[RMDB]
RNA sequence: GGGAACGACUCGAGUAGAGUCGAAAAGGUCGGGCCGUGUCCCUCCCGGCCAUCCCCGGCGCCAUGAGCCGCCGGGUCAUGAACGUGCACGAGGCCGUAAACUGCUUGGAGGCCCUCUGGGACACCCACCAGAACACAUGUUCGCAUGUGUUCUGGUAAAAGAAACAACAACAACAAC
Reactivity to 2A3 in 0.01 (KOAc 150mM, MgCl2 10mM, bicine 150mM(pH8.5), 24C), signal-to-noise 2, nucleotides 027 to 126: g030g010u020c020g000g000g010c020c050g050u000g010u030c020c010c000u040c000c000c010g020g020c000c000a000u010c000c000c000c010g020g000c000g010c020c070a250u170g050a040g120c060c010g000c020c020g050g010g000u030c030a040u110g050a100a030c050g070u180g040c070a040c190g070a130g090g050c020c020g020u030a090a110a110c060u130g060c020u040u080g140g000a070g010g070c020c030c000u000c040u020g000g000g000a010c000a000c000c000c000
Reactivity to DMS in 0.01 (KOAc 150mM, MgCl2 10mM, bicine 150mM(pH8.5), 24C), signal-to-noise 2, nucleotides 027 to 126: g000g030u000c010g000g010g010c200c070g020u000g020u000c010c000c020u000c010c000c000g010g000c010c020a050u030c070c020c000c050g010g010c050g020c060c080a130u010g010a100g030c160c050g020c030c000g010g010g000u000c030a040u000g010a100a070c060g010u000g010c030a120c130g000a190g000g000c010c040g000u010a070a110a130c100u000g010c060u000u000g020g020a090g030g000c010c000c050u000c090u020g000g020g010a020c020a030c030c260c100
An RNA of 177 nucleotides, treated with 2A3 and DMS and read out base by base.
It was measured as part of the RMDB library OK2TST.
For DMS the reverse transcriptase was MarathonRT.
Conditions: 150 mM KOAc, 10 mM MgCl2 and 150 mM bicine (pH 8.5), 24 C.
Reactivities are given for positions 27 through 126.